[RMDB]
RNA sequence: GGGAACGACUCGAGUAGAGUCGAAAACAUGCGAUCAGUUUUCUAGAGGAAGAGCACAAGUUGAGUGAGAAAGAUUGUACACCCUAAUUCCCUAGAAAGUAGGCUUGGCCUCGAAUAUUCACUCGCACUGCUCUACUCUAUUCGUAGAGUAGAGCAGAAAAGAAACAACAACAACAAC
Reactivity to 2A3 in 0.01 (KOAc 150mM, MgCl2 10mM, bicine 150mM(pH8.5), 24C), signal-to-noise 3, nucleotides 027 to 126: c050a040u140g020c010g060a040u050c070a170g030u060u000u040u000c030u030a040g010a100g130g010a040a000g020a010g040c040a030c020a130a120g050u150u180g110a020g010u020g000a030g080a040a120a030g050a040u020u040g020u020a050c020a110c030c000c000u030a080a100u010u000c010c000c000u020a030g040a030a020a030g060u140a010g070g000c130u120u140g130g040c000c000u000c000g040a080a030u110a070u160u040c010a010c020u020c010g010c000a060
Reactivity to DMS in 0.01 (KOAc 150mM, MgCl2 10mM, bicine 150mM(pH8.5), 24C), signal-to-noise 3, nucleotides 027 to 126: c140a070u000g010c030g010a030u000c070a120g010u000u000u000u000c010u000a030g010a110g000g010a050a040g010a120g020c060a050c150a070a090g010u010u000g000a030g010u000g000a040g000a100a080a100g010a050u000u000g020u000a110c090a100c040c020c010u000a080a150u000u000c000c000c000u000a030g000a020a020a110g020u010a040g000g000c030u010u000g070g010c010c010u000c040g020a090a060u010a070u020u020c030a040c030u000c030g010c160a260